[RMDB]
RNA sequence: GGGAACGACUCGAGUAGAGUCGAAAAGGUGGUUGCCUGAUUACGUAACUGACCAGACGCGCCAGCGAGCAGGGCGCGGGAGAGUACCGCGUAAUCACGACGCACGCGCUCGUGAGCCGCCAGGUCAUGGAUGCUAAAAUUUCGAUUUUAGCAUCCAAAAAGAAACAACAACAACAAC
Reactivity to DMS in 0.01 (KOAc 150mM, MgCl2 10mM, bicine 150mM(pH8.5), 24C), signal-to-noise 9, nucleotides 027 to 126: g010g030u000g010g010u000u000g010c020c030u000g010a110u000u000a050c110g020u000a070a090c110u010g010a090c020c020a140g020a190c030g000c080g010c010c020a230g020c040g000a050g010c040a210g010g000g020c010g010c000g000g000g010a090g010a140g020u010a110c090c120g000c040g010u000a070a060u000c030a050c070g000a110c060g010c030a080c110g010c100g000c050u000c010g010u000g000a240g000c010c000g000c030c020a090g010g010u000c060a140
Reactivity to 2A3 in 0.01 (KOAc 150mM, MgCl2 10mM, bicine 150mM(pH8.5), 24C), signal-to-noise 4, nucleotides 027 to 126: g040g010u040g010g040u070u090g020c000c030u050g030a080u040u100a030c050g010u020a070a060c040u040g080a060c030c000a030g050a140c030g010c040g010c000c010a030g030c020g050a030g030c060a090g030g020g000c000g000c020g010g010g010a180g000a020g040u070a070c020c050g000c000g010u020a030a050u040c030a010c060g090a030c050g030c040a050c060g070c020g010c030u010c000g030u040g030a020g010c020c000g000c000c000a020g000g050u020c010a040
The data come from the RNA Mapping Database (RMDB), library OK2TST.
Chemical mapping of a 177-nucleotide RNA with DMS and 2A3.
2A3 adducts were read by reverse transcription with SuperScript II with manganese.
For 2A3, 7,656 sequencing reads were counted.
As a SHAPE reagent, 2A3 marks flexible, mostly unpaired nucleotides at the ribose 2'-OH.
The RNA was probed in 150 mM KOAc, 10 mM MgCl2 and 150 mM bicine (pH 8.5) at 24 C.
Reactivities are rounded to 0.1 and cut off at 0 and 3.